[RMDB]
RNA sequence: GGGAACGACUCGAGUAGAGUCGAAAAGGCUCCGCCUACUCGGCGGUCGGCAGUGGAGAGGAAUCAAAAACUAGUCCCAGUUGGCAGUGCGACACACACGGAGAGCAGUGGCUGGCUCGGCGUCUCGCGGCUUAGCUAGUUUCGACUAGCUAAGCCGAAAAGAAACAACAACAACAAC
Reactivity to 2A3 in 0.01 (KOAc 150mM, MgCl2 10mM, bicine 150mM(pH8.5), 24C), signal-to-noise 1, nucleotides 027 to 126: g050g010c010u050c000c000g140c000c000u050a110c080u080c140g000g000c020g040g000u070c020g040g000c000a030g000u030g110g000a030g010a040g000g110a030a070u090c140a010a000a090a000a080c050u010a040g070u000c000c000c030a000g030u000u130g030g010c060a000g030u040g000c060g070a010c010a000c000a000c010a010c070g060g000a070g000a000g040c040a030g010u010g130g040c010u030g130g000c030u000c030g000g000c000g000u000c000u010c050g040
Reactivity to DMS in 0.01 (KOAc 150mM, MgCl2 10mM, bicine 150mM(pH8.5), 24C), signal-to-noise 1, nucleotides 027 to 126: g090g000c010u000c000c030g060c000c010u030a180c020u060c110g030g000c050g010g000u000c130g020g000c030a080g000u020g000g000a080g010a040g060g010a160a060u030c080a030a030a110a090a080c070u030a140g000u000c000c010c000a130g000u040u000g020g050c130a000g020u060g030c010g020a110c070a040c140a120c040a080c090g030g000a100g040a090g000c030a000g050u010g070g030c080u010g000g000c030u000c000g020g010c070g000u000c010u010c010g020